[RMDB]
RNA sequence: GGGAACGACUCGAGUAGAGUCGAAAAUUAGAGGUCUCGAUCACAGCGAGACCGGGAGAGACCCUCCCGGGCCGGGUUAGGAACCGGUGCGGCGGGUGGUAUAGGAGCCGGCCGGACCCGGGGAUAAUAUACCGUACAUGUUCGCAUGUACGGUAUAAAAAGAAACAACAACAACAAC
Reactivity to DMS in 0.01 (KOAc 150mM, MgCl2 10mM, bicine 150mM(pH8.5), 24C), signal-to-noise 2, nucleotides 027 to 126: u000u010a160g010a260g020g000u000c000u000c010g000a040u010c160a150c260a160g010c000g000a030g000a010c010c010g010g000g020a120g010a150g010a110c130c000c000u000c000c000c000g020g000g020c000c030g010g010g000u030u030a140g030g030a100a140c040c010g030g000u000g030c030g000g000c070g010g000g000u010g010g000u000a080u000a170g000g010a240g010c000c000g010g010c000c000g010g000a120c010c010c010g040g020g030g010a050u010a040a100